[RMDB]
An RNA of 177 nucleotides, treated with 2A3 and read out base by base. The data come from the RNA Mapping Database (RMDB), library OK1LIB. Conditions: 150 mM KOAc, 10 mM MgCl2 and 150 mM bicine (pH 8.5), 24 C. As a SHAPE reagent, 2A3 marks flexible, mostly unpaired nucleotides at the ribose 2'-OH.
RNA sequence: GGGAACGACUCGAGUAGAGUCGAAAAGCUCGGAGACGAGCAAGGCUGACAAAACCCUGUCCCAACCUCCACGUGGUGUCGGCUGGAUAAUGCUGCAUUAUGUUGCAUUUAUCAACUGGGAAAUAAAGGGUAUGGAGGCAUUCGUGCCUCCAUACCCAAAAGAAACAACAACAACAAC
Reactivity to 2A3 in 0.01 (KOAc 150mM, MgCl2 10mM, bicine 150mM(pH8.5), 24C), signal-to-noise 2, nucleotides 027 to 126: g000c000u000c000g020g000a070g030a060c010g000a000g000c000a000a040g000g010c000u000g000a010c020a020a060a050a120c010c020c000u010g000u050c000c020c030a010a040c000c050u040c060c050a090c100g110u120g040g000u090g040u010c000g030g000c040u000g040g000a000u000a000a000u050g000c000u010g000c000a080u190u000a140u300g010u010u000g010c020a030u000u140u090a020u040c020a000a000c030u020g000g000g080a010a110a090u210a030a120a020